[RMDB]
RNA sequence: GGGAACGACUCGAGUAGAGUCGAAAAUAAACCAGGCGGAUCACACUUUCGAGGGCACCUGUCGAAUGGGCGGACAGGAGCACUUCUAUCUGGAGACCCAUGCUGCAUUGGCGGUACCUCGUGACAGAAUGCAGCAGUAGUUCGCUACUGCUGCAUUAAAAGAAACAACAACAACAAC
Reactivity to 2A3 in 0.01 (KOAc 150mM, MgCl2 10mM, bicine 150mM(pH8.5), 24C), signal-to-noise 4, nucleotides 027 to 126: u130a020a070a000c000c000a000g020g000c010g040g020a050u090c020a030c000a010c080u070u120u110c020g010a040g020g040g000c060a020c010c040u030g010u000c010g040a120a100u150g030g080g050c000g040g010a000c010a060g010g020a010g000c020a030c070u020u030c010u040a180u040c060u110g040g020a050g030a070c000c000c010a040u100g010c000u010g000c010a080u070u050g060g000c010g020g010u060a070c000c020u020c000g050u050g090a010c020a050g160
Reactivity to DMS in 0.01 (KOAc 150mM, MgCl2 10mM, bicine 150mM(pH8.5), 24C), signal-to-noise 3, nucleotides 027 to 126: u080a130a110a080c020c000a040g000g040c050g000g010a060u000c070a040c120a050c080u000u040u010c070g000a050g010g010g010c030a070c020c000u020g030u000c030g000a090a060u000g000g000g000c020g000g010a070c050a010g000g010a060g040c120a050c070u000u000c010u020a150u040c090u040g000g010a120g000a120c020c000c030a080u010g000c060u000g000c030a080u030u010g020g000c040g010g010u010a050c060c020u000c020g000u010g000a050c200a070g000
Chemical mapping of a 177-nucleotide RNA with 2A3 and DMS. Reactivities are rounded to 0.1 and cut off at 0 and 3. For DMS the reverse transcriptase was MarathonRT. The 2A3 profile rests on 2,885 reads. In probing experiments dimethyl sulfate is read out at A N1 and C N3, which are open when not base-paired. For DMS, 5,362 sequencing reads were counted. Values cover nucleotides 27 to 126.